An RNA of 177 nucleotides, treated with DMS and 2A3 and read out base by base. It was measured as part of the RMDB library OK2TST. DMS adducts were read by reverse transcription with MarathonRT.
RNA sequence: GGGAACGACUCGAGUAGAGUCGAAAACUGUCGCCAUUUUCCGUGAAGUAGCGGGUAAUGGUCGGGAACAGCGGCUGGAACAGAUGAUAUUCACACAACAGCUUAUAGGUUUCGUAACCGUAGCCCGGACAUACUAGGCGUUCGCGCCUAGUAUGUCAAAAGAAACAACAACAACAAC
Reactivity to DMS in 0.01 (KOAc 150mM, MgCl2 10mM, bicine 150mM(pH8.5), 24C), signal-to-noise 2, nucleotides 027 to 126: c030u000g020u000c060g010c000c010a040u000u000u000u000c000c000g000u000g000a150a130g000u000a200g000c000g000g010g000u010a030a070u010g000g000u000c070g050g000g000a000a010c050a100g000c130g000g000c050u010g040g000a040a090c130a080g010a090u000g000a110u000a110u010u000c020a090c090a120c140a050a070c050a000g000c000u000u010a110u000a160g000g000u000u000u000c060g000u000a080a090c050c030g010u000a130g000c010c050c050g010
Reactivity to 2A3 in 0.01 (KOAc 150mM, MgCl2 10mM, bicine 150mM(pH8.5), 24C), signal-to-noise 2, nucleotides 027 to 126: c010u030g030u080c050g020c030c000a000u000u010u070u000c000c010g030u060g080a220a050g170u190a070g060c030g000g030g010u000a010a010u030g070g020u030c020g000g000g000a040a010c020a020g050c010g030g000c010u010g000g080a130a060c020a080g070a110u070g050a000u100a150u300u130c060a090c020a000c000a170a120c010a030g000c000u020u060a130u100a080g100g000u000u000u180c040g040u080a000a010c030c000g010u020a010g020c010c000c000g020